[RMDB]
Structure probing data (DMS and 2A3) for a 170-nucleotide construct. The reactions ran in a buffer of 150 mM KOAc, 10 mM MgCl2 and 150 mM bicine (pH 8.5), at 24 C. The data come from the RNA Mapping Database (RMDB), library 15KLIB.
RNA sequence: GGGAACGACUCGAGUAGAGUCGAAAAACAACCUGGCGGUGAUGCUAUUAGUUUGAGUUUUAAUAACCUUUUAGGGUUUGAUUCUAGUAAACCAGUCACUAAGAAAUACACUUACUCCUUCUUGCCUACGGGUCAACCUUCGGGUUGACCAAAAGAAACAACAACAACAAC
Reactivity to DMS in 0.01 (KOAc 150mM, MgCl2 10mM, bicine 150mM(pH8.5), 24C), signal-to-noise 3, nucleotides 027 to 129: a100c170a000a000c060c000u020g060g010c090g060g030u000g010a120u040g010c150u000a050u060u020a000g040u010u000u000g030a100g040u000u000u000u000a100a060u000a030a120c000c090u000u010u020u050a070g030g050g110u030u020u000g070a020u060u030c080u010a050g020u060a010a010a010c110c000a040g050u020c040a050c040u000a030a040g010a090a140a060u030a050c160a060c040u000u000a110c090u020c020c100u020u020c060u100u040g020c030c050u020a030c140g020
Reactivity to 2A3 in 0.01 (KOAc 150mM, MgCl2 10mM, bicine 150mM(pH8.5), 24C), signal-to-noise 4, nucleotides 027 to 129: a000c040a010a040c010c010u000g010g010c020g020g020u060g010a050u130g030c000u110a070u020u070a110g060u040u040u070g060a040g030u000u020u050u010a150a140u100a010a010c000c000u010u200u100u300a130g040g020g000u020u000u020g020a050u080u000c040u010a050g030u080a010a020a090c020c020a000g090u060c000a010c020u010a050a000g030a040a040a010u090a040c050a010c030u020u100a040c010u070c000c000u040u040c000u030u050g070c000c000u030a030c040g030